[RMDB]
Source: RMDB library OK1LIB, as collected in RNAgym. This 177-nucleotide RNA was probed chemically with 2A3. High 2A3 reactivity points to a flexible backbone, as in loops and unpaired stretches. Reactivities are given for positions 27 through 126.
RNA sequence: GGGAACGACUCGAGUAGAGUCGAAAAAUCUGCUGACAUGUUUUACUACCCAGCUCACCAACAAGUGGCGUAGUACCAUUCGUCAAGACACUCAUCGCUACUUGCUUUGCGGCACAAGGCCACCAGAGCGCUGGGAUUACUUCGGUAAUCCCAGCGCAAAAGAAACAACAACAACAAC
Reactivity to 2A3 in 0.01 (KOAc 150mM, MgCl2 10mM, bicine 150mM(pH8.5), 24C), signal-to-noise 2, nucleotides 027 to 126: a000u100c040u060g030c000u080g030a010c000a100u040g000u040u140u000u060a080c000u020a120c090c000c000a090g020c000u030c000a120c110c000a000a100c010a000a030g030u000g000g000c000g050u070a070g130u030a100c000c000a200u260u250c070g000u030c150a080a000g020a020c000a000c050u040c000a090u000c070g040c000u000a000c000u030u030g000c000u160u070u070g010c010g040g000c030a030c000a070a010g100g000c000c000a010c000c000a000g000a010
The RNA was probed in 150 mM KOAc, 10 mM MgCl2 and 150 mM bicine (pH 8.5) at 24 C.